[RMDB]
RNA sequence: GGGAACGACUCGAGUAGAGUCGAAAAACCAAUUGAACAAACACGGAUCUGUGUCCAGCGAUCCUGAGCAUGGAACUGUUUCUCUUCACGGAGGGGCUGCUUCUGUGUCUCGGUUGAUUGCUGGACAUGCUACUUGCUGCUUCGGCAGCAAGUAGCAAAAAGAAACAACAACAACAAC
Reactivity to 2A3 in 0.01 (KOAc 150mM, MgCl2 10mM, bicine 150mM(pH8.5), 24C), signal-to-noise 1, nucleotides 027 to 126: a010c000c000a030a020u170u140g260a160a110c080a140a030a000c020a070c170g060g030a080u020c000u010g040u000g000u040c000c000a000g010c000g000a020u000c010c030u010g000a000g010c000a000u000g000g000a000a000c000u000g010u000u040u030c000u040c000u240u230c180a110c120g000g000a000g000g000g000g000c000u000g000c080u000u000c000u020g050u000g140u040c060u000c000g020g000u000u110g000a000u000u020g020c000u000g000g000a000c000a000